[RMDB]
RNA sequence: GGGAACGACUCGAGUAGAGUCGAAAAGUAAUAGAUAUGUGGAUGACGAGAAAGGGUGCGCUGAUAUCCACAACGAAUGCUAGCAGUAAAAAGAAUAGCGCUCCUUAUACAACUAGCGACAAAAGGAUAAGGUAUCGUGAUGUCAAUCACAUUGCGACAUUACGGCCUGAUUCGUCAGGCCGUAAUGAAAAGAAACAACAACAACAAC
Reactivity to DMS in 0.01 (KOAc 150mM, MgCl2 10mM, bicine 150mM(pH8.5), 24C), signal-to-noise 2, nucleotides 027 to 156: g010u000a090a130u010a120g040a130u000a090u010g060u010g010g010a090u010g090a200c100g000a110g020a030a160a090g000g000g020u010g010c020g030c000u000g010a160u000a080u000c020c010a060c050a080a180c060g060a090a100u010g020c060u000a030g000c030a150g020u000a030a050a070a120a080g010a090a130u000a110g040c060g030c050u000c000c000u000u000a130u000a010c010a060a070c030u000a050g010c040g020a150c110a030a060a120a130g010g010a080u010a010a050g010g000u000a050u000c040g060u010g040a030u000g030u000c050a160a160u020c130a140c030a020u000u010g030c000g030a080
Reactivity to 2A3 in 0.01 (KOAc 150mM, MgCl2 10mM, bicine 150mM(pH8.5), 24C), signal-to-noise 4, nucleotides 027 to 156: g040u060a020a140u040a130g080a070u160a050u130g010u000g000g000a010u050g020a070c090g010a050g090a180a080a020g090g010g000u050g000c020g000c020u050g020a040u010a030u100c010c000a020c010a040a010c030g030a050a020u110g020c050u080a020g020c040a050g040u180a080a040a040a040a010g060a080a090u030a030g000c010g000c000u000c010c000u010u030a090u020a020c030a060a020c030u040a010g050c010g070a040c050a040a100a040a030g050g010a030u070a050a030g060g000u090a040u030c010g000u010g010a010u010g020u050c030a040a070u100c020a020c010a010u000u020g000c000g000a010